[RMDB]
RNA sequence: GGGAACGACUCGAGUAGAGUCGAAAACAGGAAACUGAGCAGCGAAAAGGGGCAGCUGCGGACGGCACAAGGAUCGCAUGCUUGAGGGAGUGGCAUGGCCACCCGAGGGGUCCUCUGUGGGACCAACGCUAAUGCACCCAUUCGUGGGUGCAUUAGCAAAAGAAACAACAACAACAAC
Reactivity to 2A3 in 0.01 (KOAc 150mM, MgCl2 10mM, bicine 150mM(pH8.5), 24C), signal-to-noise 4, nucleotides 027 to 126: c020a010g020g080a100a090a020c040u050g030a030g020c020a000g010c040g100a050a010a040a100g010g020g040g000c000a030g020c030u020g000c000g040g010a010c000g000g020c020a010c040a060a060g050g010a080u050c000g010c090a070u070g070c020u060u060g040a090g020g070g000a150g030u060g080g000c180a200u090g100g000c010c000a000c000c000c000g010a030g050g110g000g010u000c040c000u040c060u080g070u230g000g010g000a000c000c030a050a020c060
Reactivity to DMS in 0.01 (KOAc 150mM, MgCl2 10mM, bicine 150mM(pH8.5), 24C), signal-to-noise 2, nucleotides 027 to 126: c080a110g030g000a100a050a110c010u000g000a150g020c050a080g000c000g030a020a010a080a050g000g020g000g040c090a070g040c090u000g010c050g020g010a120c130g060g000c050a050c090a090a080g000g000a110u000c080g060c050a130u030g000c010u000u000g000a170g010g000g000a100g030u010g010g000c030a100u010g000g010c000c040a010c010c010c010g000a100g000g000g000g030u000c020c010u030c170u010g010u040g000g000g000a060c010c000a000a040c080